[RMDB]
RNA sequence: GGGAACGACUCGAGUAGAGUCGAAAACAGCGUUGAUGAAACUGAAGUAUUCCAUUUUUCAGCUUCUUUGAAGUCCGGCAAGAUGGGUUCUGGUUGAUUCCAUUGGCGCUGCACUCAAUCAUGUCUUUCCAACUUAUGCGUUCGCGCAUAAGUUGGAAAAAGAAACAACAACAACAAC
Reactivity to 2A3 in 0.01 (KOAc 150mM, MgCl2 10mM, bicine 150mM(pH8.5), 24C), signal-to-noise 1, nucleotides 027 to 126: c000a010g000c000g000u000u070g040a030u040g030a000a000a000c010u040g030a050a000g010u020a090u140u200c000c000a020u000u050u000u030u060c000a010g040c000u040u000c160u030u200u290g020a020a000g040u150c130c160g040g000c060a020a000g010a020u000g010g010g010u020u010c060u070g210g060u070u050g000a220u200u000c070c010a010u000u000g060g000c000g000c010u000g000c040a200c000u040c000a000a180u040c010a090u090g070u030c000u000u010
Structure probing data (2A3) for a 177-nucleotide construct.
2A3 adducts were read by reverse transcription with SuperScript II with manganese.